[RMDB]
RNA sequence: GGGAACGACUCGAGUAGAGUCGAAAAGAUAUGGAUCGCAUAGGGAGUUCAUUCGGAAACGAAGAACGAGGAUCUAUGACCGAUCCUAAGUCAAAUCCCCAUAUCGAGUUCGCUCGAUAUGGGGAAAGCAACAAUUAGGGUUCGCCCUAAUUGUUGCAAAAGAAACAACAACAACAAC
Reactivity to DMS in 0.01 (KOAc 150mM, MgCl2 10mM, bicine 150mM(pH8.5), 24C), signal-to-noise 2, nucleotides 027 to 126: g010a040u010a300u000g000g000a020u000c000g010c000a010u000a030g000g010g000a060g000u000u000c010a180u010u020c000g010g010a070a090a220c010g000a020a030g000a010a000c000g030a060g010g000a020u000c000u000a000u000g010a160c200c020g000a010u000c000c000u010a030a100g000u010c030a060a130a110u000c000c000c000c000a010u000a000u000c000g010a010g020u000u010c240g070c000u000c030g000a000u000a000u000g000g000g010g010a000a000a020
Reactivity to 2A3 in 0.01 (KOAc 150mM, MgCl2 10mM, bicine 150mM(pH8.5), 24C), signal-to-noise 2, nucleotides 027 to 126: g050a020u070a070u250g010g000a020u000c000g000c020a010u010a020g000g060g000a060g010u000u030c070a260u300u020c040g030g000a070a070a030c020g010a040a050g010a010a000c020g030a300g040g000a000u000c000u000a030u030g060a120c050c050g000a000u000c010c010u030a100a010g050u030c030a010a000a280u050c000c000c010c010a000u010a010u010c000g010a010g030u100u050c160g130c170u000c000g000a000u000a000u010g010g000g000g020a030a020a000